[RMDB]
RNA sequence: GGGAACGACUCGAGUAGAGUCGAAAAGAAAAAGGAGGACAUGUCCGCCUGAUUGUGUCCGACCCUGUAGAUACUUCGCACUGGAAAUUGUGCGGGACAACCCACGCGCGCAGCGAGCCGAAAAAAAGAUAAUUACCAUGUUCGCAUGGUAAUUAUCAAAAGAAACAACAACAACAAC
Reactivity to DMS in 0.01 (KOAc 150mM, MgCl2 10mM, bicine 150mM(pH8.5), 24C), signal-to-noise 7, nucleotides 027 to 126: g010a060a070a100a110a030g020g010a300g010g000a030c030a050u000g000u010c020c200g010c120c070u000g000a100u000u010g030u000g010u000c020c020g010a120c090c010c010u000g020u000a080g010a100u000a060c070u000u010c010g010c010a020c010u010g000g020a090a110a130u010u010g010u000g000c020g010g000g000a090c060a050a070c040c020c020a100c110g010c050g010c070g020c060a060g000c060g000a080g010c030c030g010a000a000a040a040a060a110a080
Reactivity to 2A3 in 0.01 (KOAc 150mM, MgCl2 10mM, bicine 150mM(pH8.5), 24C), signal-to-noise 5, nucleotides 027 to 126: g030a000a110a010a010a010g040g020a030g010g000a010c020a040u040g020u000c010c040g080c090c110u050g020a060u100u250g030u000g000u020c020c010g030a170c040c010c010u010g040u070a050g040a120u070a150c000u070u110c010g000c000a010c030u060g110g090a040a090a100u240u090g000u010g000c000g030g000g010a020c020a030a050c000c010c010a020c040g040c000g000c000g000c030a040g040c000g040a020g020c030c000g050a110a040a010a000a000a000a010